Source information: Conditions: 150 mM KOAc, 10 mM MgCl2 and 150 mM bicine (pH 8.5), 24 C. Structure probing data (2A3 and DMS) for a 177-nucleotide construct. For 2A3 the reverse transcriptase was SuperScript II with manganese.

[RMDB]
RNA sequence: GGGAACGACUCGAGUAGAGUCGAAAAAUGAUUUGCCAAUCAGUAAGAUAUUUUAAUGGAUUAACAUGCCGCACAAAAUGGUUACAGGUGUUCAUUCCAAUAAGUAAUGGAAAAUUGAACGGGCGUACCAUUUCUUGUGAUUCGUCACAAGAAAUGGAAAAGAAACAACAACAACAAC
Reactivity to 2A3 in 0.01 (KOAc 150mM, MgCl2 10mM, bicine 150mM(pH8.5), 24C), signal-to-noise 1, nucleotides 027 to 126: a000u060g000a010u020u050u300g010c010c000a020a090u020c060a010g000u020a060a020g100a280u080a060u090u120u030u050a060a130u100g020g000a000u050u050a000a010c000a030u170g030c030c000g040c120a030c050a070a000a020a090u100g020g020u130u110a100c070a070g120g040u060g050u020u000c020a000u040u010c000c020a030a000u250a200a010g130u070a070a100u060g010g000a020a000a110a130u000u060g000a010a000c000g040g020g020c040g020u030a030
Reactivity to DMS in 0.01 (KOAc 150mM, MgCl2 10mM, bicine 150mM(pH8.5), 24C), signal-to-noise 2, nucleotides 027 to 126: a090u010g000a070u000u010u000g000c040c010a270a110u000c030a060g020u020a050a060g020a240u020a010u000u000u000u000a050a110u000g000g010a020u000u030a010a040c170a120u010g010c030c020g010c140a080c110a030a050a080a070u000g020g010u010u000a020c070a070g000g000u000g010u000u000c050a070u000u000c010c000a020a080u000a040a110g000u000a060a080u020g020g020a020a040a080a040u010u010g000a050a050c150g000g000g030c050g020u000a080